[RMDB]
RNA sequence: GGGAACGACUCGAGUAGAGUCGAAAAACUGCACAGGAGAGUACGGUGUCCAGAACACCUACGUCGGUGUGCCUGUGGUGAUUGGCAAGAACGGUGUGGAGAAGAUCGUUGAGCUCCAGCUGACGGCUCACGGUUAAGAUUUCGAUCUUAACCGUGAAAAAGAAACAACAACAACAAC
Reactivity to DMS in 0.01 (KOAc 150mM, MgCl2 10mM, bicine 150mM(pH8.5), 24C), signal-to-noise 6, nucleotides 027 to 126: a120c060u000g000c020a030c020a040g020g010a120g000a140g020u000a030c220g030g010u000g000u000c040c220a150g010a120a070c010a010c000c010u010a030c040g010u000c050g010g020u010g020u010g010c010c040u000g020u010g000g010u000g000a090u010u020g010g030c040a090a080g010a060a080c060g010g010u000g010u010g010g000a070g000a100a090g000a060u000c120g010u000u010g000a150g010c010u010c030c060a150g000c040u000g010a080c100g010g000c100
Reactivity to 2A3 in 0.01 (KOAc 150mM, MgCl2 10mM, bicine 150mM(pH8.5), 24C), signal-to-noise 4, nucleotides 027 to 126: a000c020u070g000c030a020c000a030g050g070a100g010a000g060u020a040c150g020g000u010g020u010c040c050a050g100a130a010c000a000c000c000u050a030c030g180u080c040g080g090u100g040u100g040c010c020u050g030u060g040g040u070g030a160u110u130g050g000c040a080a040g040a150a020c040g030g000u090g020u060g150g040a070g030a080a040g060a070u120c080g060u070u080g040a020g030c000u010c030c010a010g000c020u020g020a030c020g070g000c000